[RMDB]
RNA sequence: GGGAACGACUCGAGUAGAGUCGAAAAGAAAAGCUGGUCUGAAAAGGGCCAGCAACGUCAGAACAAAAUCGCAAGGUGUAUCAAAGAACGCCAAAACUGACGAAUGCGAAAUCAAAAAUGAAAAAAAGUUAUAGCGAAGAUUCGUCUUCGCUAUAACAAAAGAAACAACAACAACAAC
Reactivity to 2A3 in 0.01 (KOAc 150mM, MgCl2 10mM, bicine 150mM(pH8.5), 24C), signal-to-noise 1, nucleotides 027 to 126: g000a000a060a000a000g000c000u000g000g000u000c010u000g050a040a080a110a030g000g010g020c000c000a010g010c000a000a000c000g000u000c000a020g070a150a060c050a090a030a020a100u130c090g000c120a090a060g030g010u040g010u060a090u120c040a150a080a070g020a080a040c010g000c000c000a060a010a020a020c010u000g010a010c010g070a010a020u080g040c040g060a070a000a020u090c050a080a050a190a080a030u130g120a090a150a010a020a000a000a000
Reactivity to DMS in 0.01 (KOAc 150mM, MgCl2 10mM, bicine 150mM(pH8.5), 24C), signal-to-noise 1, nucleotides 027 to 126: g010a150a150a180a210g010c000u000g000g020u000c000u000g000a070a100a130a070g020g000g040c000c000a020g000c020a010a060c000g000u010c000a000g010a090a070c180a150a100a100a050u010c000g050c050a050a150g000g010u000g000u000a110u020c090a140a160a120g030a110a010c000g020c020c010a070a070a110a060c010u000g000a030c000g000a080a080u000g050c080g020a080a090a030u020c060a030a150a020a100a090u060g000a000a000a100a040a020a100a100